The data come from the RNA Mapping Database (RMDB), library OK3TST. The record gives the reactivity of an RNA of 207 nucleotides to 2A3 and DMS. DMS adducts were read by reverse transcription with MarathonRT. For 2A3, 571 sequencing reads were counted. For 2A3 the reverse transcriptase was SuperScript II with manganese. Reactivities are given for positions 27 through 156. The RNA was probed in 150 mM KOAc, 10 mM MgCl2 and 150 mM bicine (pH 8.5) at 24 C.
[RMDB]
RNA sequence: GGGAACGACUCGAGUAGAGUCGAAAAGAUAAGUCUAGUAAGUCACAGAGUGAGGAUUUCAAACCAUGUUUAUCUGACUUCAAAGCCCAUACUUAAAUAAUUGCUUCUGUGUAAUGUUUUUUCUCUCCUCUUAAACCAAAGUUUUAGAAAUAGUCAGAUGUAGUGAGUGAUUCGUCACUCACUACAUAAAAGAAACAACAACAACAAC
Reactivity to 2A3 in 0.01 (KOAc 150mM, MgCl2 10mM, bicine 150mM(pH8.5), 24C), signal-to-noise 2, nucleotides 027 to 156: g040a030u110a080a010g010u080c070u160a020g060u070a090a050g050u060c030a000c020a080g150a030g080u080g040a040g020g040a070u050u110u190c120a060a050a040c040c020a010u050g050u060u070u010a080u050c010u000g050a050c000u040u010c100a130a100a060g000c000c010c020a020u070a150c020u090u120a070a040a110u190a160a220u160u110g020c000u070u080c010u100g000u010g000u060a040a050u060g080u010u070u000u000u100u000c010u010c000u020c040c020u010c000u090u200a060a020a030c020c030a100a050a160g000u030u070u070u090a050g050a010a170a070u060a040g030u110c010a010g030
Reactivity to DMS in 0.01 (KOAc 150mM, MgCl2 10mM, bicine 150mM(pH8.5), 24C), signal-to-noise 1, nucleotides 027 to 156: g010a100u010a040a070g000u010c030u010a150g050u000a060a070g030u010c030a080c060a140g000a110g000u010g000a070g040g000a130u000u000u000c060a050a080a140c040c040a050u000g000u000u000u000a050u010c020u000g010a040c020u010u000c080a060a100a170g010c000c000c060a070u000a070c040u010u030a030a090a120u000a040a080u010u000g000c000u000u000c050u000g000u000g010u010a030a080u000g010u000u000u000u000u000u000c010u000c000u010c050c040u000c060u010u000a080a090a060c020c070a060a090a200g000u000u000u010u000a090g000a080a070a130u000a100g040u010c030a050g000